[RMDB]
RNA sequence: GGGAACGACUCGAGUAGAGUCGAAAAGAGCCACAUACCUACCCAAGGUGAAAGCUCCUUCUCUCGAAAUGUGUAACUCAUGAUUCUCAUGACCCCUGGUUGGAGAGAUCCGGACUAGGAGCCAGGGAAAGCCGCUGCCGAUUCGUCGGCAGCGGAACUUGUCUCAUAACUUCGGUUAUGAGACAAGAAAAGAAACAACAACAACAAC
Reactivity to 2A3 in 0.01 (KOAc 150mM, MgCl2 10mM, bicine 150mM(pH8.5), 24C), signal-to-noise 1, nucleotides 027 to 156: g000a000g090c060c010a020c020a020u120a010c010c010u050a050c000c010c030a000a030g030g000u040g040a180a110a030g120c080u080c040c020u030u030c040u000c000u010c070g020a110a150a060u070g010u020g000u040a110a040c010u030c050a080u050g080a200u160u020c020u010c030a050u110g100a150c020c000c000c000u000g000g040u020u070g100g020a020g010a000g000a020u020c030c020g000g050a050c100u010a030g000g000a000g030c000c010a000g000g000g050a110a030a000g020c000c010g030c010u020g040c000c030g080a040u040u070c220g030u010c000g160g030c010a000g010c000g020g000a000a000